Conditions: 150 mM KOAc, 10 mM MgCl2 and 150 mM bicine (pH 8.5), 24 C. This 177-nucleotide RNA was probed chemically with 2A3 and DMS. For DMS, 736 sequencing reads were counted. The 2A3 profile rests on 730 reads. Values are in units of 0.01, from 0 to 300, in steps of 10.

[RMDB]
RNA sequence: GGGAACGACUCGAGUAGAGUCGAAAAUGGCCGCAGAUUUAUCUGAUGGACAGAGGCGCCAGGCUUGAGACGAGCCAGACUCGAUUUAAAGACAAGUAUUUUGUUCCUGAUAAGCGUAAUGGCCUAAGCUCUCGUUGUGAUUCGUCACAACGAGAGCAAAAGAAACAACAACAACAAC
Reactivity to 2A3 in 0.01 (KOAc 150mM, MgCl2 10mM, bicine 150mM(pH8.5), 24C), signal-to-noise 1, nucleotides 027 to 126: u030g010g000c020c000g000c050a060g000a160u050u080u020a050u040c020u020g100a090u170g080g020a010c020a010g050a030g040g050c050g060c020c030a020g070g000c010u030u000g050a030g010a040c030g010a020g000c020c010a100g040a270c010u000c020g150a180u060u050u150a100a180a050g070a040c070a010a010g080u050a270u040u120u100u080g100u040u000c040c030u000g030a030u050a020a030g000c030g050u070a010a140u170g020g000c010c030u010a060a010
Reactivity to DMS in 0.01 (KOAc 150mM, MgCl2 10mM, bicine 150mM(pH8.5), 24C), signal-to-noise 1, nucleotides 027 to 126: u000g010g000c000c030g030c150a080g000a130u010u000u000a030u010c000u000g000a170u000g040g000a040c020a050g000a170g040g000c010g030c090c110a150g010g000c030u000u000g000a110g010a050c070g000a050g010c040c190a150g000a260c090u000c010g010a090u000u000u000a070a020a100g030a040c100a040a090g020u000a100u000u000u000u010g010u000u000c000c020u010g000a030u000a030a090g010c030g010u000a090a050u030g030g020c000c040u000a070a080